This 207-nucleotide RNA was probed chemically with DMS and 2A3. The RNA was probed in 150 mM KOAc, 10 mM MgCl2 and 150 mM bicine (pH 8.5) at 24 C. 2A3 adducts were read by reverse transcription with SuperScript II with manganese. For 2A3, 1,593 sequencing reads were counted. The data come from the RNA Mapping Database (RMDB), library PDB130.
RNA sequence: GGGAACGACUCGAGUAGAGUCGAAAAGGCGCAGUGAAUAGGCCCAGGCGACUGUUUACCAAAAUCACAGCACUCUGCCAACACGAACAGUGGACGUAUAGGGUGUGACGCCUGCCCGGUGCCGGAAGGUCAAGUGGAGCGGUGCAAGCUGCGAAAUGUAUUCAAGACAGUUCGCUGUCUUGAAUACAAAAGAAACAACAACAACAAC
Reactivity to DMS in 0.01 (KOAc 150mM, MgCl2 10mM, bicine 150mM(pH8.5), 24C), signal-to-noise 1, nucleotides 027 to 156: g050g030c000g060c070a050g050u010g000a030a050u000a020g010g010c080c000c010a220g000g060c010g000a060c030u000g020u020u000u010a030c000c090a000a070a090a080u010c080a110c070a290g000c030a030c000u000c010u010g000c010c010a120a210c050a050c030g010a150a190c190a190g000u000g050g010a150c160g020u000a140u020a000g050g010g080u000g000u010g050a050c020g000c000c010u000g040c000c010c000g040g040u000g000c140c010g010g030a070a060g030g020u020c040a030a180g010u010g000g000a120g080c020g000g000u010g050c030a040a270g020c010u020g040c050g000a040a130a100u000
Reactivity to 2A3 in 0.01 (KOAc 150mM, MgCl2 10mM, bicine 150mM(pH8.5), 24C), signal-to-noise 3, nucleotides 027 to 156: g050g000c010g020c060a050g000u020g090a070a110u140a150g060g030c030c030c000a020g020g000c010g080a100c100u090g090u060u120u100a140c040c040a140a050a030a070u130c060a060c010a050g020c000a010c020u020c010u040g000c020c020a070a030c030a020c000g220a300a070c100a150g010u020g000g050a050c040g030u070a070u150a200g010g020g000u000g020u020g050a040c050g000c000c000u010g000c020c000c010g070g010u040g000c000c000g030g050a050a040g030g010u050c070a040a080g070u090g040g040a070g000c060g050g000u040g010c030a050a020g000c010u000g000c000g030a080a030a010u090